[RMDB]
RNA sequence: GGGAACGACUCGAGUAGAGUCGAAAACGUACUGCCGGCUCAUCGGGCGCUAACCCGUUUGCGUGUAUUGCCGCAGGGAUCGCUUCUCUAUGGGGGCCAGCUCACGGCGGUGCGAACGAAGCCUGCCGCGAACAGCAUUCUUCGGAAUGCUGUUCGCAAAAGAAACAACAACAACAAC
Reactivity to 2A3 in 0.01 (KOAc 150mM, MgCl2 10mM, bicine 150mM(pH8.5), 24C), signal-to-noise 1, nucleotides 027 to 126: c010g000u040a050c000u000g020c000c000g040g000c030u020c020a040u080c050g000g000g100c020g040c060u060a100a100c000c000c000g090u100u190u070g020c040g020u120g050u070a250u140u210g120c030c000g010c020a040g000g020g000a000u060c040g000c040u210u060c070u050c020u050a190u150g020g000g010g070g060c000c020a070g000c050u000c040a000c000g000g000c000g000g030u020g000c020g010a030a010c060g110a030a000g020c000c040u040g070c080c060
Reactivity to DMS in 0.01 (KOAc 150mM, MgCl2 10mM, bicine 150mM(pH8.5), 24C), signal-to-noise 1, nucleotides 027 to 126: c020g030u000a060c060u020g030c080c000g000g000c000u000c080a050u000c160g000g020g080c300g000c090u010a070a100c080c050c000g010u000u010u010g020c020g000u020g030u020a070u020u010g030c050c040g050c000a170g000g000g010a050u010c250g000c050u010u000c000u000c050u000a140u030g030g030g000g000g000c040c040a030g020c030u040c040a170c010g020g000c010g010g020u000g010c000g030a060a170c120g020a110a140g010c000c020u010g010c050c120
An RNA of 177 nucleotides, treated with 2A3 and DMS and read out base by base. Conditions: 150 mM KOAc, 10 mM MgCl2 and 150 mM bicine (pH 8.5), 24 C.